[RMDB]
RNA sequence: GGGAACGACUCGAGUAGAGUCGAAAAGAUAUGGAUCGUUUGGCUCCUGACUAGGUAGGCAACAGCUACUGGUCGGAAACGACCAUGUAGACAUGCCUACCUAGUCAGGAGCCGACGAUCCUAAGUCCAAGUAUAUCCACUUCGGUGGAUAUACUUGAAAAGAAACAACAACAACAAC
Reactivity to DMS in 0.01 (KOAc 150mM, MgCl2 10mM, bicine 150mM(pH8.5), 24C), signal-to-noise 1, nucleotides 027 to 126: g000a090u010a300u010g000g000a000u000c000g000u000u000u010g280g000c040u020c020c010u000g000a050c000u020a000g000g030u040a040g000g030c030a060a090c300a240g020c000u000a010c010u000g000g040u000c000g030g010a120a100a240c000g000a010c000c000a000u010g040u000a010g000a050c090a140u000g000c000c000u000a030c000c000u010a000g000u020c000a000g020g010a000g000c010c010g010a020c010g000a010u000c010c000u000a010a060g020u010c070
The record gives the reactivity of an RNA of 177 nucleotides to DMS.
For DMS, 1,787 sequencing reads were counted.
The RNA was probed in 150 mM KOAc, 10 mM MgCl2 and 150 mM bicine (pH 8.5) at 24 C.